RNA sequence: GGGAACGACUCGAGUAGAGUCGAAAAGAUAUGGAAUAAUAGGCUUUUGACGCUUGAGUACAUCGGAAACGAUGUACCAAGCGAUAAGCCUCAUUAUUCCUAAGUCAAACGCAUGUUCGCAUGCGAACUUCUAAGCACUGUUCGCAGUGCUUAGAAGAAAAGAAACAACAACAACAAC
Reactivity to 2A3 in 0.01 (KOAc 150mM, MgCl2 10mM, bicine 150mM(pH8.5), 24C), signal-to-noise 3, nucleotides 027 to 126: g030a020u090a050u260g000g000a000a000u000a010a000u000a010g010g010c030u110u120u080u300g230a160c070g020c000u010u010g020a050g110u010a010c000a000u000c000g000g000a030a080a050c020g000a000u000g000u000a000c000c000a000a000g000c000g010a000u010a010a000g000c000c000u000c010a000u000u010a000u010u010c000c000u010a110a040g090u020c060a160a020a080c020g000c010a000u020g030u090u160c300g000c190a010u010g020c020g060a090a100
Reactivity to DMS in 0.01 (KOAc 150mM, MgCl2 10mM, bicine 150mM(pH8.5), 24C), signal-to-noise 4, nucleotides 027 to 126: g010a050u000a300u010g000g000a020a000u000a010a000u000a020g010g000c000u000u000u010u010g010a250c140g020c000u000u000g010a140g000u000a010c000a000u000c000g000g010a130a110a240c000g010a030u000g000u000a000c000c000a000a010g010c000g010a020u000a000a000g010c000c000u000c170a000u000u000a000u000u000c000c000u000a020a100g010u000c020a090a160a280c040g020c010a010u000g000u000u020c210g030c010a010u000g000c000g000a080a120

Source information: Source: RMDB library TTRDES, as collected in RNAgym. Chemical mapping of a 177-nucleotide RNA with 2A3 and DMS. The 2A3 profile rests on 9,948 reads. The DMS profile rests on 4,580 reads. Reactivities are rounded to 0.1 and cut off at 0 and 3. 2A3 adducts were read by reverse transcription with SuperScript II with manganese. DMS adducts were read by reverse transcription with MarathonRT.